RNA sequence: GGGAACGACUCGAGUAGAGUCGAAAAGACACUGGCUCAGCCACUCUGCAGAUGCAGUGAGGAUGCUGAGGACAACAGCCUAGCUGCUCUGCAGAUGCAGUGAGGACGCUAAGGAUGCUGUCCUGGCUGCACCUGCUCGUGGGGCAAGGCGGGGCAACGUCGAUUAAAAUUUCGAUUUUAAUCGACGAAAAGAAACAACAACAACAAC
Reactivity to DMS in 0.01 (KOAc 150mM, MgCl2 10mM, bicine 150mM(pH8.5), 24C), signal-to-noise 1, nucleotides 027 to 156: g040a100c050a090c060u010g010g010c040u090c030a100g010c010c030a170c030u000c020u000g060c000a180g000a130u000g000c000a040g000u010g000a040g000g010a050u010g020c000u010g050a110g020g010a110c030a020a000c000a020g000c000c010u000a130g010c000u000g000c010u010c050u000g000c010a020g000a020u000g010c010a030g030u000g000a040g030g010a010c000g010c020u000a160a130g060g010a140u010g040c020u020g010u000c000c000u000g000g000c000u000g000c010a000c000c010u020g000c060u010c100g000u000g000g000g000g050c000a060a030g010g020c040g000g000g030g030c020a070a130
Reactivity to 2A3 in 0.01 (KOAc 150mM, MgCl2 10mM, bicine 150mM(pH8.5), 24C), signal-to-noise 5, nucleotides 027 to 156: g140a000c040a010c150u110g080g000c000u000c020a000g010c000c000a040c020u010c000u010g000c000a060g030a290u270g040c000a020g040u050g060a130g090g020a060u120g000c020u030g020a070g060g050a030c050a080a010c000a030g010c000c000u030a010g000c000u020g000c000u000c000u040g000c000a010g000a010u000g000c000a000g000u060g200a010g000g000a000c000g000c040u090a130a180g180g030a160u220g050c070u150g010u000c000c010u020g050g000c000u000g000c010a010c000c000u020g030c020u050c100g170u280g010g020g010g010c060a100a050g040g000c030g010g000g000g000c000a040a010